[RMDB]
RNA sequence: GGGAACGACUCGAGUAGAGUCGAAAACACUAUUGGUUCGCCAAUAGUGAAACGGCAAGCCGAAGCCGAACGGCAAGCCGAUGCCGAACGGCAACGGCAAAAAAACUGCGUUCUUCGGAACGCAGAAGACUUCACAUUUGUUCGCAAAUGUGAAGUCAAAAGAAACAACAACAACAAC
Reactivity to DMS in 0.01 (KOAc 150mM, MgCl2 10mM, bicine 150mM(pH8.5), 24C), signal-to-noise 2, nucleotides 027 to 126: c000a000c010u000a000u000u010g000g000u000u010c300g060c000c000a000a000u000a060g000u000g000a030a050a040c120g000g010c130a100a160g010c000c000g020a040a300g000c040c000g030a010a210c060g030g010c000a010a140g020c280c250g000a040u000g010c000c000g040a010a280c020g030g000c000a030a100c010g000g000c000a000a000a040a020a020a000a000c000u010g020c000g030u010u000c010u000u000c250g020g000a030a000c000g000c010a000g000a030a040